[RMDB]
RNA sequence: GGGAACGACUCGAGUAGAGUCGAAAAGGCACUUUCCGGGGACGGGUCAAAAGUCCGUUCCCUUGAUUGCCUUCCGAUCGGAAUAGCCCCCCUCCGUCGGAAGGACUAGGGCGGUGGAGUUGCCCCAAAACUCGAAACAAUUCGUUGUUUCGAGUUUAAAAGAAACAACAACAACAAC
Reactivity to 2A3 in 0.01 (KOAc 150mM, MgCl2 10mM, bicine 150mM(pH8.5), 24C), signal-to-noise 2, nucleotides 027 to 126: g040g020c020a020c040u010u040u040c040c060g000g000g000g000a010c010g000g030g010u120c040a130a070a030a000g010u000c010c000g020u060u080c020c000c000u010u050g020a010u000u070g030c000c000u000u000c020c000g020a100u170c080g010g030a070a140u140a230g020c000c000c000c000c000c000u010c000c000g020u020c000g020g000a000a010g020g000a000c020u040a020g050g010g030c100g000g070u040g020g050a100g010u070u060g040c010c000c000c000a010
Reactivity to DMS in 0.01 (KOAc 150mM, MgCl2 10mM, bicine 150mM(pH8.5), 24C), signal-to-noise 4, nucleotides 027 to 126: g010g010c020a080c040u000u000u020c020c080g020g000g000g010a020c020g020g000g000u010c040a140a130a170a210g000u010c000c010g000u000u010c000c000c000u000u000g000a060u010u010g010c010c000u000u000c000c010g000a010u020c080g000g000a020a100u040a170g010c010c000c010c020c070c160u000c000c010g000u010c010g000g000a010a000g000g010a040c060u010a070g010g010g020c080g000g000u010g000g010a080g000u000u010g010c020c000c000c050a050

Structure probing data (2A3 and DMS) for a 177-nucleotide construct. The RNA was probed in 150 mM KOAc, 10 mM MgCl2 and 150 mM bicine (pH 8.5) at 24 C. Reactivities are given for positions 27 through 126. It was measured as part of the RMDB libraries RFM100 and RFMREP.